RNA sequence: GGGAACGACUCGAGUAGAGUCGAAAAGUCCCUUUCAGAUCAUUCAUAACGCGCAGCCUUCAACGAUGAAGGCUGCGCCUCCCGAGAGAACGGGACCGGACAAAGGCGUCCCCGUCAGGCAACUGGCCCAACGUUUGGAAUUCGUUCCAAACGUUGGAAAAGAAACAACAACAACAAC
Reactivity to DMS in 0.01 (KOAc 150mM, MgCl2 10mM, bicine 150mM(pH8.5), 24C), signal-to-noise 2, nucleotides 027 to 126: g040u000c080c010c020u010u000u070c070a090g000a090u000c110a000u020u030c050a060u020a210a170c260g000c000g060c030a030g020c000c000u000u000c000a150a300c230g000a300u070g040a000a000g000g020c010u040g000c000g000c000c040u000c000c040c110g000a110g000a170g000a040a090c020g000g000g050a020c060c050g020g040a120c140a130a030a010g010g010c080g000u000c000c000c020c100g020u020c040a070g000g000c090a090a110c010u000g000g000c160
Reactivity to 2A3 in 0.01 (KOAc 150mM, MgCl2 10mM, bicine 150mM(pH8.5), 24C), signal-to-noise 3, nucleotides 027 to 126: g020u000c010c000c020u020u040u030c090a070g000a100u060c020a050u260u100c060a060u190a180a060c050g000c010g000c000a000g000c000c000u020u000c090a210a090c170g170a180u240g000a000a000g000g000c000u000g000c000g000c000c000u010c000c000c000g060a060g010a010g020a150a040c000g000g010g010a000c000c070g030g000a030c060a030a120a020g040g030c030g020u000c000c010c000c020g020u050c010a010g000g050c010a050a030c080u000g020g000c000
Source: RMDB library RFM100, as collected in RNAgym.
The record gives the reactivity of an RNA of 177 nucleotides to DMS and 2A3.
The reactions ran in a buffer of 150 mM KOAc, 10 mM MgCl2 and 150 mM bicine (pH 8.5), at 24 C.